RNA sequence: GGGAACGACUCGAGUAGAGUCGAAAAGCGUAGUGUUCGCACUACGCAUAUGAGGUGGACACCUCUCCCCAACGAGAGGCUACUAUCUGAAAGGGUAGACAAUGCGGUACGUGACUUCGGUCACGUAGAGUGCUGUAGGAUUCGUCCUACAGCACUCAAAAGAAACAACAACAACAAC
Reactivity to DMS in 0.01 (KOAc 150mM, MgCl2 10mM, bicine 150mM(pH8.5), 24C), signal-to-noise 3, nucleotides 027 to 126: g010c000g010u010a000g020u000g010u000u000c220g020c000a030c000u000a000c000g010c000a010u000a050u000g010a020g000g010u000g000g010a160c150a140c000c000u000c000u000c030c010c010c120a100a100c160g010a060g000a110g010g020c040u000a100c000u000a020u000c010u020g000a070a060a130g000g000g000u000a010g010a090c100a070a100u000g010c050g010g010u000a020c010g000u010g000a020c020u000u020c230g070g000u000c000a010c000g000u000a010
Reactivity to 2A3 in 0.01 (KOAc 150mM, MgCl2 10mM, bicine 150mM(pH8.5), 24C), signal-to-noise 4, nucleotides 027 to 126: g000c000g000u000a000g000u020g040u070u090c250g000c080a000c000u010a000c000g020c000a010u010a030u050g020a020g040g040u080g070g140a050c040a050c140c000u000c010u000c000c000c000c010a050a050c100g090a020g010a030g110g030c010u080a050c000u000a040u040c010u010g040a100a040a030g050g000g000u000a000g050a060c080a040a090u150g040c060g020g030u040a010c000g000u010g000a000c000u030u050c190g060g010u000c000a010c000g000u010a020
Structure probing data (DMS and 2A3) for a 177-nucleotide construct. DMS adducts were read by reverse transcription with MarathonRT. The DMS profile rests on 2,300 reads. Reactivities are rounded to 0.1 and cut off at 0 and 3. High 2A3 reactivity points to a flexible backbone, as in loops and unpaired stretches. It was measured as part of the RMDB library RFMREP.